[RMDB]
RNA sequence: GGGAACGACUCGAGUAGAGUCGAAAAGAUAUGGAAGAUGCACGUCGAUAAGCUGCUAUUCGGAAACGAAUACAGCUUUUGACGACGGGGUCUUCCUAAGUCAAAGUGCGCUCUUCGGAGCGCACAACCACAGUAGUCUGUUCGCAGACUACUGUGGAAAAGAAACAACAACAACAAC
Reactivity to 2A3 in 0.01 (KOAc 150mM, MgCl2 10mM, bicine 150mM(pH8.5), 24C), signal-to-noise 2, nucleotides 027 to 126: g010a030u030a010u120g040g010a000a020g020a030u080g220c150a110c300g020u000c010g050a080u050a300a000g010c010u020g050c120u020a020u000u010c000g030g000a050a030a020c020g000a010a000u000a000c010a000g010c000u020u020u010u010g080a040c040g010a000c010g000g000g000g000u000c000u000u020c000c000u000a070a000g010u050c020a150a070a090g020u020g040c000g040c000u000c000u090u210c300g100g030a000g000c000g030c020a010c000a000a000
Reactivity to DMS in 0.01 (KOAc 150mM, MgCl2 10mM, bicine 150mM(pH8.5), 24C), signal-to-noise 2, nucleotides 027 to 126: g000a050u010a300u000g000g000a030a030g010a000u010g030c060a140c040g020u000c000g040a100u000a030a010g030c020u010g030c300u000a000u000u000c010g000g000a090a090a140c000g000a010a010u000a020c000a010g000c000u000u000u000u000g000a140c150g010a010c010g010g000g000g000u010c000u000u010c000c000u000a010a060g010u010c010a100a160a150g000u000g010c030g000c010u000c000u000u000c260g000g010a040g020c000g000c000a000c000a060a120